[RMDB]
RNA sequence: GGGAACGACUCGAGUAGAGUCGAAAAAUUAUACAGAUGGAGAAAUCGAGGCCAGACAGGCUAAACAGCUUGCUCUUGAGGUUUGUGGCAGCCGGGGCGUCGGCUAGACCAAGCCACCUCCCAUGCAUUCACUUUAAGAGAGUUUGCACAAGGUCUACUAAAUUUUAGGUUUCGACCUAAAAUUUAGAAAAGAAACAACAACAACAAC
Reactivity to 2A3 in 0.01 (KOAc 150mM, MgCl2 10mM, bicine 150mM(pH8.5), 24C), signal-to-noise 1, nucleotides 027 to 156: a000u130u110a060u010a000c050a020g110a090u120g040g030a050g020a040a110a020u140c060g040a060g100g000c010c000a000g030a070c000a020g000g020c040u050a000a210a070c040a000g000c000u050u090g010c020u000c020u060u020g030a010g030g080u050u070u130g090u120g100g000c020a010g030c010c040g000g000g020g020c090g050u080c040g010g000c000u060a050g070a100c000c060a010a000g000c000c020a010c000c000u070c040c030c010a020u030g000c000a020u000u070c020a000c010u040u040u150a060a000g040a000g000a030g120u060u110u100g070c030a060c030a120a050g100g000u040c010u100a090